[RMDB]
Structure probing data (2A3 and DMS) for a 207-nucleotide construct. For 2A3 the reverse transcriptase was SuperScript II with manganese. For DMS the reverse transcriptase was MarathonRT. The 2A3 profile rests on 877 reads. It was measured as part of the RMDB library OK3TST.

RNA sequence: GGGAACGACUCGAGUAGAGUCGAAAACAGUCAGUAGUGAUACCCGCAAUCGUACUAAGUUGUCUUAUAAUAGCACUGAUUCUAGGAGUGAUAUAUUAUAUUUUGAGGGUAAAGAGGUCUCGAUCAACUGCAUAUCAACAACUUCCUAUAAUACAUAAGACAUGUAGGGAUUCGUCCCUACAUGUCUAAAAGAAACAACAACAACAAC
Reactivity to 2A3 in 0.01 (KOAc 150mM, MgCl2 10mM, bicine 150mM(pH8.5), 24C), signal-to-noise 3, nucleotides 027 to 156: c020a020g100u080c000a040g030u120a000g020u090g050a030u030a100c010c050c000g020c020a040a110u190c080g140u110a080c040u080a010a110g020u070u060g040u040c040u090u110a130u000a150a090u040a100g060c030a000c060u060g120a160u090u220c080u120a030g090g060a050g040u010g030a030u030a000u000a020u100u140a030u090a040u160u040u090u200g030a030g010g010g020u060a050a130a010g100a000g010g060u000c020u010c040g060a120u030c020a000a030c000u080g070c050a030u060a020u210c030a030a050c010a040a060c040u020u030c000c000u020a080u060a190a200u200a040c000a030u160a120
Reactivity to DMS in 0.01 (KOAc 150mM, MgCl2 10mM, bicine 150mM(pH8.5), 24C), signal-to-noise 2, nucleotides 027 to 156: c100a130g020u000c050a070g040u020a090g040u000g020a160u010a030c020c020c010g020c040a080a110u000c100g050u000a090c110u010a080a280g030u000u000g020u000c010u010u000a070u000a090a140u000a020g030c020a060c010u000g000a260u000u020c070u010a150g050g030a100g050u010g000a060u000a040u000a040u020u000a120u000a100u020u000u000u000g000a060g000g020g100u010a050a070a110g000a120g000g020u020c030u000c100g000a050u010c020a030a060c020u000g000c080a040u020a150u000c030a020a080c040a010a050c030u010u010c010c040u010a100u010a050a080u010a030c070a040u010a090